[RMDB]
RNA sequence: GGGAACGACUCGAGUAGAGUCGAAAAACGGGGGCAACAUAUUCAGGCGGCACUAACGGCGCUGGCUGCACUGGCGGCAUAUCUGGACCUUUGCGAAUAGCUUUUGCCAGCUCUAUAGGGUCAUCGUAAAGCCAGUCUCCGGUGUCAGGGUGAUUGGACAAUACGGGUACUUCGGUACCCGUAUUGUAAAAGAAACAACAACAACAAC
Reactivity to DMS in 0.01 (KOAc 150mM, MgCl2 10mM, bicine 150mM(pH8.5), 24C), signal-to-noise 1, nucleotides 027 to 156: a110c130g000g010g020g050g030c040a050a110c070a090u000a110u060u010c050a090g030g030c040g050g000c020a050c040u010a040a100c120g030g000c090g030c030u020g010g030c240u080g010c140a090c070u000g010g030c010g000g020c110a090u000a060u010c020u020g040g000a030c030c000u020u000u000g030c200g010a040a080u000a050g000c000u010u000u000u010g050c050c070a080g000c020u020c020u000a200u000a050g010g020g020u000c000a070u000c060g000u000a030a180a260g000c010c010a070g000u000c010u000c000c010g000g010u000g020u020c050a110g010g080g000u010g000a040u000u000g080g000
Reactivity to 2A3 in 0.01 (KOAc 150mM, MgCl2 10mM, bicine 150mM(pH8.5), 24C), signal-to-noise 1, nucleotides 027 to 156: a000c060g010g000g000g000g060c050a120a000c000a100u140a080u200u110c040a020g000g070c010g050g030c000a000c060u040a180a030c140g030g000c070g000c030u020g000g020c040u000g010c070a020c010u000g020g000c000g070g020c020a120u070a100u220c040u110g110g010a080c000c000u020u040u080g000c050g060a080a110u060a220g000c000u000u020u070u130g100c050c050a000g030c000u000c050u050a130u050a010g070g000g000u000c020a050u060c040g060u080a000a050a000g020c000c000a000g000u000c000u000c000c000g040g040u060g050u050c010a020g000g000g110u050g080a100u140u110g070g020
Source information
This 207-nucleotide RNA was probed chemically with DMS and 2A3. Conditions: 150 mM KOAc, 10 mM MgCl2 and 150 mM bicine (pH 8.5), 24 C. The data come from the RNA Mapping Database (RMDB), library OK3TST. DMS adducts were read by reverse transcription with MarathonRT. For DMS, 1,909 sequencing reads were counted.